[RMDB]
RNA sequence: GGGAACGACUCGAGUAGAGUCGAAAAUUCUGCAUGGCGGUCAGCCGGCCGCAUCCCGUGGCUUGACGGAUGCGGACGCCACCUUCGAGAGUACCCCAGGCCUUGAGGGGAAGAGCGAGACAACUGCCACUUACUACAUGUUCGCAUGUAGUAAGUGAAAAGAAACAACAACAACAAC
Reactivity to 2A3 in 0.01 (KOAc 150mM, MgCl2 10mM, bicine 150mM(pH8.5), 24C), signal-to-noise 7, nucleotides 027 to 126: u080u020c030u070g090c060a090u090g030g000c030g030g030u060c030a020g020c030c000g040g000c000c010g010c010a010u060c050c070c030g030u050g130g080c250u130u220g130a050c010g000g010a010u000g000c000g000g000a010c010g000c000c010a030c000c000u020u030c010g040a030g000a020g050u110a150c010c020c000c000a040g100g000c010c000u020u020g020a010g000g020g000g000a050a020g030a010g020c040g030a070g010a060c040a080a030c060u080g030c020
Reactivity to DMS in 0.01 (KOAc 150mM, MgCl2 10mM, bicine 150mM(pH8.5), 24C), signal-to-noise 8, nucleotides 027 to 126: u000u010c050u000g020c100a180u000g000g020c030g010g010u010c070a110g030c070c010g010g010c010c010g000c010a020u000c050c030c080g030u000g020g020c190u010u020g000a090c110g010g000a020u000g000c000g000g000a060c040g010c030c030a090c020c020u000u000c030g010a040g010a130g020u000a120c050c010c010c030a130g000g010c040c010u000u000g000a050g010g000g000g000a050a060g000a110g010c010g000a090g000a050c060a090a080c120u000g000c130

Structure probing data (2A3 and DMS) for a 177-nucleotide construct. The 2A3 profile rests on 22,676 reads. The DMS profile rests on 16,903 reads. Conditions: 150 mM KOAc, 10 mM MgCl2 and 150 mM bicine (pH 8.5), 24 C. 2A3 adducts were read by reverse transcription with SuperScript II with manganese.